An RNA of 177 nucleotides, treated with DMS and 2A3 and read out base by base.
Source: RMDB libraries RFM100 and RFMREP, as collected in RNAgym.
For 2A3, 281 sequencing reads were counted.
Values are in units of 0.01, from 0 to 300, in steps of 10.
[RMDB]
RNA sequence: GGGAACGACUCGAGUAGAGUCGAAAAGUGUGUGAAGAACUGGCACAUCUCCACGAGGUUGUAAGGAAGGUGAAAAGAUCGCUCUUAAUUAGAUUAAAAACAUUGUUUUCUUCCUGUGUCAUUUUGCGGUCACAUGAGUAUUCGUACUCAUGUGACCAAAAGAAACAACAACAACAAC
Reactivity to DMS in 0.01 (KOAc 150mM, MgCl2 10mM, bicine 150mM(pH8.5), 24C), signal-to-noise 2, nucleotides 027 to 126: g000u010g030u020g000u000g000a040a060g000a050a030c090u000g000g010c050a070c050a070u030c040u000c010c020a110c070g000a090g010g020u000u000g020u010a050a070g000g000a030a030g000g020u000g010a040a070a070a120g000a080u010c120g000c100u000c090u020u000a030a080u020u080a130g000a210u000u010a000a060a070a040a060c080a080u020u000g020u020u000u000u030c030u000u000c030c010u000g010u000g000u020c070a140u000u010u000u000g020c300
Reactivity to 2A3 in 0.01 (KOAc 150mM, MgCl2 10mM, bicine 150mM(pH8.5), 24C), signal-to-noise 1, nucleotides 027 to 126: g090u030g000u000g000u000g050a140a090g050a000a000c180u180g000g000c050a000c000a090u080c010u000c000c000a140c070g050a010g010g000u050u050g110u150a050a000g030g000a000a000g000g050u180g070a000a010a000a010g030a030u300c000g020c060u030c000u080u060a150a000u110u090a050g080a150u090u300a070a000a000a000a000c010a080u110u030g090u300u030u080u000c000u000u000c000c000u020g010u000g070u160c080a090u160u130u010u170g050c110
The reactions ran in a buffer of 150 mM KOAc, 10 mM MgCl2 and 150 mM bicine (pH 8.5), at 24 C.